[RMDB]
Conditions: 150 mM KOAc, 10 mM MgCl2 and 150 mM bicine (pH 8.5), 24 C. An RNA of 207 nucleotides, treated with 2A3 and read out base by base. The 2A3 profile rests on 1,078 reads.
RNA sequence: GGGAACGACUCGAGUAGAGUCGAAAAAGGUGAUUUCUCCUGCACCUUUAUCAAUGGAGGAACUCGACUUUGCUGUGGGUCCCAAAGGGACCUUAGGUGCAGACAGCUACCGGCGGUGAAGUGUGAGCAUAGGUUCGUGUCUUCGGACACGAACCAAGCUGGACUUAUGGUUCGCCAUAAGUCCAGCAAAAGAAACAACAACAACAAC
Reactivity to 2A3 in 0.01 (KOAc 150mM, MgCl2 10mM, bicine 150mM(pH8.5), 24C), signal-to-noise 2, nucleotides 027 to 156: a000g000g000u010g010a010u010u020u020c010u000c010c000u110g090c030a010c020c000u090u180u130a030u000c070a000a060u290g000g000a000g010g010a020a020c000u000c010g030a000c000u000u010u040g010c030u020g000u110g080g000g050u010c000c000c020a150a200a130g000g000g010a020c000c000u040u090a030g000g000u010g000c000a060g080a300c020a030g060c000u060a030c010c000g000g010c020g020g030u030g000a030a000g030u100g070u080g060a020g000c080a100u130a180g000g000u000u000c010g000u010g010u000c020u050u060c120g040g000a000c000a000c000g000a000a000c000c000a000a000